[RMDB]
An RNA of 170 nucleotides, treated with 2A3 and DMS and read out base by base. Reactivities are given for positions 27 through 129.
RNA sequence: GGGAACGACUCGAGUAGAGUCGAAAAUCCGACUGGUACAUUCACUGUUGUAAUGCGCCCUAACUACACAAUUAAGGGUUCCUUUCUGUGUGGUUCUUGUGGUAGUGUUGGUUACACCAAGGAGGGUUAAGAAUCGGCUUCGGCCGAUUCAAAAGAAACAACAACAACAAC
Reactivity to 2A3 in 0.01 (KOAc 150mM, MgCl2 10mM, bicine 150mM(pH8.5), 24C), signal-to-noise 2, nucleotides 027 to 129: u000c020c000g070a020c000u020g040g010u050a000c070a130u000u110c000a040c000u110g030u030u060g000u250a080a000u090g090c020g060c070c000c000u010a000a000c000u070a000c010a000c010a060a240u040u030a040a020g070g230g020u130u220c000c000u040u000u000c000u000g030u000g000u020g000g050u020u010c050u170u130g070u140g000g000u040a090g000u000g070u160u000g010g000u130u010a050c170a020c000c000a020a000g000g050a090g000g070g050u010u060a050a000
Reactivity to DMS in 0.01 (KOAc 150mM, MgCl2 10mM, bicine 150mM(pH8.5), 24C), signal-to-noise 3, nucleotides 027 to 129: u020c030c030g000a090c130u030g010g050u000a070c090a130u050u030c060a080c090u030g030u080u010g030u020a110a110u010g010c100g040c050c000c000u040a000a000c030u010a010c050a040c050a070a100u000u050a050a000g010g060g020u060u000c030c020u040u000u000c080u030g000u050g040u010g010g000u040u050c230u030u010g010u050g000g030u020a000g030u050g040u000u000g020g040u030u030a080c090a070c020c060a080a100g020g010a150g000g050g050u000u030a060a050